[RMDB]
RNA sequence: GGGAACGACUCGAGUAGAGUCGAAAACUUGAGUACAAAGUAAAGAAGGAGGCAGCAUCGCUGGCGGAGAUCAAGGUGGACAUAGCAUCAGCCGGGCACUGGUUUGGCGGAGGCCACCUCAUGCGCCCUCGUGAGUAUGAUUCGUCAUACUCACGAGAAAAGAAACAACAACAACAAC
Reactivity to 2A3 in 0.01 (KOAc 150mM, MgCl2 10mM, bicine 150mM(pH8.5), 24C), signal-to-noise 3, nucleotides 027 to 126: c000u050u110g040a010g070u100a110c060a120a130a010g100u170a120a110a060g050a040a030g030g030a020g020g000c040a020g000c000a050u060c040g020c070u030g030g000c030g040g050a090g020a050u120c060a060a000g030g010u030g010g020a020c040a100u170a030g080c010a110u060c000a020g010c010c010g020g010g050c070a060c170u130g000g080u020u070u130g000g010c000g030g040a020g050g000c000c010a010c010c020u040c020a060u180g020c030g030c010c010
Reactivity to DMS in 0.01 (KOAc 150mM, MgCl2 10mM, bicine 150mM(pH8.5), 24C), signal-to-noise 4, nucleotides 027 to 126: c040u000u020g010a080g010u010a080c110a100a060a060g020u010a080a090a090g010a090a120g000g000a090g020g000c040a020g020c070a060u010c080g020c030u010g020g010c040g010g010a100g000a080u000c120a090a040g000g020u000g000g010a060c070a070u010a090g010c080a050u010c030a050g020c040c030g000g010g020c050a090c100u000g010g000u000u000u000g010g010c010g010g010a110g000g010c030c020a010c050c000u010c100a060u000g010c070g010c020c040
The record gives the reactivity of an RNA of 177 nucleotides to 2A3 and DMS. The 2A3 profile rests on 3,265 reads. For 2A3 the reverse transcriptase was SuperScript II with manganese. For DMS the reverse transcriptase was MarathonRT.